[RMDB]
RNA sequence: GGGAACGACUCGAGUAGAGUCGAAAAGCACCUGUAGUCCCAGCUACUCAGGGGGCUGAGGUAGGAGGAUUACCUGAGCCUGGGAGGUCGAAGCUGCAGUGAGCAGACAUCAUGCCACUGCACUCCCAGCUGAGUAAUAGAGAGAGACCCUGUCUCAUGUUCUGUAUAUCUUCGGAUAUACAGAACAAAAAGAAACAACAACAACAAC
Reactivity to DMS in 0.01 (KOAc 150mM, MgCl2 10mM, bicine 150mM(pH8.5), 24C), signal-to-noise 3, nucleotides 027 to 156: g020c020a060c020c020u010g000u000a110g000u010c020c010c040a230g010c020u000a040c040u000c030a050g040g030g000g030g020c030u000g000a000g020g010u000a050g000g000a110g000g010a260u000u020a040c010c020u000g000a050g030c010c020u000g010g020g010a050g020g030u000c100g000a100a050g040c140u010g000c000a030g020u000g010a190g040c000a060g000a190c130a130u000c120a070u000g020c010c010a040c020u010g020c000a030c010u000c020c020c010a180g000c010u000g000a050g030u000a040a160u000a100g000a150g000a100g000a130g010a060c030c040c030u000g010u010c010u000c010a230
Reactivity to 2A3 in 0.01 (KOAc 150mM, MgCl2 10mM, bicine 150mM(pH8.5), 24C), signal-to-noise 5, nucleotides 027 to 156: g020c010a020c050c050u070g090u160a030g040u040c000c010c020a020g040c040u050a040c010u030c080a040g000g020g030g060g000c000u030g050a020g030g010u030a040g020g100a040g050g020a080u090u060a040c000c000u040g050a010g040c020c010u040g020g010g010a010g020g050u250c150g080a130a040g040c120u060g000c020a000g000u010g020a070g020c010a010g140a160c030a180u200c030a040u130g000c000c000a000c000u000g000c000a010c000u000c000c000c000a010g010c020u020g010a000g030u050a040a080u110a060g130a010g020a010g010a030g020a040c050c000c070u080g030u030c010u000c010a040
The data come from the RNA Mapping Database (RMDB), library OK3TST. The record gives the reactivity of an RNA of 207 nucleotides to DMS and 2A3. Conditions: 150 mM KOAc, 10 mM MgCl2 and 150 mM bicine (pH 8.5), 24 C. For 2A3, 3,766 sequencing reads were counted. For DMS, 6,985 sequencing reads were counted.